[RMDB]
RNA sequence: GGGAACGACUCGAGUAGAGUCGAAAAUUAUUGCCAGAGAUCUGGACGCUGGAUGUGAAAGCGAACCAAUUAGCGGAUGUGAUCUCAGGGAUCGCGCCGGUGCGAUUGGUGGUGAAUCUGGGGGUGAGUGGUAUGAUAAUUUCGAUUAUCAUACCACAAAAGAAACAACAACAACAAC
Reactivity to 2A3 in 0.01 (KOAc 150mM, MgCl2 10mM, bicine 150mM(pH8.5), 24C), signal-to-noise 8, nucleotides 027 to 126: u070u020a070u080u150g050c010c010a020g010a010g020a110u060c030u090g030g020a030c020g010c020u050g060g070a150u110g090u050g240a140a020a010g030c030g010a030a020c010c000a010a040u030u020a060g060c020g030g050a170u100g050u030g030a010u000c030u020c070a080g220g080g010a010u010c000g000c000g000c020c030g130g090u130g050c030g010a020u000u030g010g010u030g000g020u060g030a060a060u020c030u040g010g000g000g000g010u020g000a020
Reactivity to DMS in 0.01 (KOAc 150mM, MgCl2 10mM, bicine 150mM(pH8.5), 24C), signal-to-noise 9, nucleotides 027 to 126: u010u010a070u010u010g010c010c000a070g000a120g010a080u000c020u000g000g010a110c040g020c020u000g010g010a100u010g010u010g010a110a110a080g020c040g010a150a070c020c010a030a030u000u000a210g010c010g000g000a050u010g030u000g000a010u000c000u010c210a170g020g010g010a010u000c010g010c010g010c020c020g010g010u010g010c100g000a030u000u000g000g020u000g000g010u000g000a070a070u000c050u000g000g010g000g000g010u000g000a140
Overview
The data come from the RNA Mapping Database (RMDB), library OK2TST. An RNA of 177 nucleotides, treated with 2A3 and DMS and read out base by base. For 2A3, 17,969 sequencing reads were counted. For 2A3 the reverse transcriptase was SuperScript II with manganese.